[RMDB]
RNA sequence: GGGAACGACUCGAGUAGAGUCGAAAAAACGGUGUCUUCGAGGUGAUUUCCACCAGCGGCGACACGCACUUGGGCGGAGAGGACUUUGACCACCGCGUGAUGGACUACUUCAUCAAGCUGAUCAAGAGUUAGAUAAAGACUUCGGUCUUUAUCUAACAAAAGAAACAACAACAACAAC
Reactivity to DMS in 0.01 (KOAc 150mM, MgCl2 10mM, bicine 150mM(pH8.5), 24C), signal-to-noise 8, nucleotides 027 to 126: a080a050c080g010g020u000g010u000c060u010u010c010g010a110g000g010u010g010a190u000u000u000c090c010a050c030c010a070g010c050g000g010c070g000a100c130a080c040g010c050a060c140u000u010g010g010g010c080g020g000a060g000a050g000g010a050c050u000u000u000g010a050c210c010a040c070c050g010c030g000u000g000a030u000g000g010a040c300u010a120c150u000u000c010a020u000c020a060a080g010c080u010g010a070u000c080a070a080g010a300
Reactivity to 2A3 in 0.01 (KOAc 150mM, MgCl2 10mM, bicine 150mM(pH8.5), 24C), signal-to-noise 6, nucleotides 027 to 126: a000a000c060g020g010u030g000u010c050u050u030c030g020a010g030g020u040g050a130u070u090u080c060c000a010c010c010a040g070c050g090g020c030g060a070c040a020c170g030c010a070c020u100u120g040g010g020c100g020g030a040g010a040g070g050a030c000u060u050u060g020a020c000c020a010c020c010g000c030g040u030g010a020u020g000g020a020c100u120a070c060u210u030c010a030u010c020a030a020g050c080u120g060a120u090c050a040a040g060a020
Structure probing data (DMS and 2A3) for a 177-nucleotide construct.
DMS adducts were read by reverse transcription with MarathonRT.
The reactions ran in a buffer of 150 mM KOAc, 10 mM MgCl2 and 150 mM bicine (pH 8.5), at 24 C.
The 2A3 profile rests on 10,043 reads.
The DMS profile rests on 10,224 reads.